Source: RMDB library M2PK50, as collected in RNAgym. Structure probing data (DMS and 2A3) for a 177-nucleotide construct. Values are in units of 0.01, from 0 to 300, in steps of 10. The 2A3 profile rests on 2,706 reads. Conditions: 150 mM KOAc, 10 mM MgCl2 and 150 mM bicine (pH 8.5), 24 C.

RNA sequence: GGGAACGACUCGAGUAGAGUCGAAAACCCAGACCGUUCGCGGUCUGGGAAAACCGGAAUAAACAUGGGCCCAUGAGCCGAACCGGUAGGGCGUCCGCCCAAAAACUUGUGUCUUCGGACACAAGAACGUUAGUCUGAUGUUCGCAUCAGACUAACGAAAAGAAACAACAACAACAAC
Reactivity to DMS in 0.01 (KOAc 150mM, MgCl2 10mM, bicine 150mM(pH8.5), 24C), signal-to-noise 2, nucleotides 027 to 126: c000c000c000a020g020a000c000c010g030u000u000c240g060c000g000g010u000c000u060g000g000g000a010a010a080a060c010c010g000g000a130a110u010a060a110a070c160a160u000g010g000g000c020c010c160a130u010g020a170g020c020c010g000a090a110c020c010g010g000u000a120g000g000g000c010g030u000c120c070g000c010c000c010a050a060a060a090a180c000u000u000g000u010g000u000c000u000u010c170g000g000a040c000a000c000a010a030g010a080a080
Reactivity to 2A3 in 0.01 (KOAc 150mM, MgCl2 10mM, bicine 150mM(pH8.5), 24C), signal-to-noise 2, nucleotides 027 to 126: c020c000c000a000g000a010c000c000g020u050u080c260g000c000g110g000u000c010u000g000g010g020a040a120a010a000c010c000g000g030a150a160u170a080a160a020c070a170u180g040g010g020c000c010c060a240u300g000a010g010c020c000g010a040a070c020c020g000g000u030a070g070g010g020c020g050u030c030c060g020c000c000c020a010a000a020a040a070c020u010u020g010u000g000u000c000u010u040c260g100g000a010c000a010c000a000a000g010a060a000